[RMDB]
RNA sequence: GGGAACGACUCGAGUAGAGUCGAAAAGUCAAUACCACCCGCAGUUACGAUCAAACCUUCACCGGCUAAGGCUUCAGUAGCAGGACCCACGCAAAGAUUAUUUUUAACGCCAUCUUGCAUGUCUUUGCUUGGAUUUAUAGUUCGCUAUAAAUCCAAGAAAAGAAACAACAACAACAAC
Reactivity to 2A3 in 0.01 (KOAc 150mM, MgCl2 10mM, bicine 150mM(pH8.5), 24C), signal-to-noise 2, nucleotides 027 to 126: g030u000c020a030a040u060a220c010c010a050c010c020c010g030c040a030g020u030u120a040c050g000a060u080c060a050a040a070c020c000u080u080c060a010c060c030g010g020c020u050a090a020g030g000c010u050u020c020a050g030u040a020g030c010a000g050g010a010c010c010c000a030c050g040c010a150a000a000g020a040u050u070a080u090u300u030u080u090a090a040c060g040c060c010a030u030c040u010u050g000c020a050u190g020u010c030u000u020u010g030
Reactivity to DMS in 0.01 (KOAc 150mM, MgCl2 10mM, bicine 150mM(pH8.5), 24C), signal-to-noise 2, nucleotides 027 to 126: g000u010c090a100a050u030a170c040c050a090c050c020c020g010c100a100g010u000u010a080c100g010a060u000c090a080a100a120c050c010u000u000c070a080c100c040g000g000c040u000a040a100g010g000c030u000u000c050a030g030u010a050g010c040a070g020g000a120c040c010c010a040c110g010c080a030a050a050g010a020u000u020a050u010u010u000u000u000a050a090c110g000c070c060a020u000c040u010u000g020c080a070u010g030u000c010u000u000u000g010
The data come from the RNA Mapping Database (RMDB), library RFMREP.
Chemical mapping of a 177-nucleotide RNA with 2A3 and DMS.
For 2A3 the reverse transcriptase was SuperScript II with manganese.
DMS adducts were read by reverse transcription with MarathonRT.
Values cover nucleotides 27 to 126.
The DMS profile rests on 1,649 reads.